[RMDB]
RNA sequence: GGGAACGACUCGAGUAGAGUCGAAAACUGUGAAGUCUAGGGUAGUAGAGUGGAGUCAUGUGGCCCAGACUUUUGGGUUUGGAGUGUGGCUCUGCCACCAUGUGAUCCACACCAAGCUGUGUGGCAGAAUGAGGGACAGAUUCGUCUGUCCCUCAUUAAAAGAAACAACAACAACAAC
Reactivity to DMS in 0.01 (KOAc 150mM, MgCl2 10mM, bicine 150mM(pH8.5), 24C), signal-to-noise 4, nucleotides 027 to 126: c040u000g010u010g020a080a050g010u000c020u010a110g000g000g020u000a080g000u000a050g010a130g040u000g010g000a050g020u000c030a040u000g000u000g010g010c110c010c000a020g010a040c040u000u000u010u010g010g010g020u000u000u010g000g010a150g000u000g020u000g000g000c050u010c050u010g010c010c020a070c020c030a050u010g010u000g000a130u000c010c000a050c040a050c060c070a120a130g020c140u000g000u010g020u010g000g030c200a040g000
Reactivity to 2A3 in 0.01 (KOAc 150mM, MgCl2 10mM, bicine 150mM(pH8.5), 24C), signal-to-noise 1, nucleotides 027 to 126: c050u010g040u080g150a110a030g020u000c050u210a060g060g020g010u050a080g070u000a030g110a060g140u080g000g050a010g060u040c030a050u090g030u050g120g000c060c000c010a030g030a060c000u080u060u080u180g090g000g040u000u030u030g040g000a070g000u130g000u030g020g000c000u030c030u130g000c020c000a050c030c030a050u120g080u040g090a080u000c000c020a010c010a010c000c010a110a040g010c130u040g020u010g000u040g060g000c000a030g100
This 177-nucleotide RNA was probed chemically with DMS and 2A3. The 2A3 profile rests on 1,335 reads. Reactivities are given for positions 27 through 126. The DMS profile rests on 5,276 reads. The data come from the RNA Mapping Database (RMDB), library OK2TRN. The RNA was probed in 150 mM KOAc, 10 mM MgCl2 and 150 mM bicine (pH 8.5) at 24 C.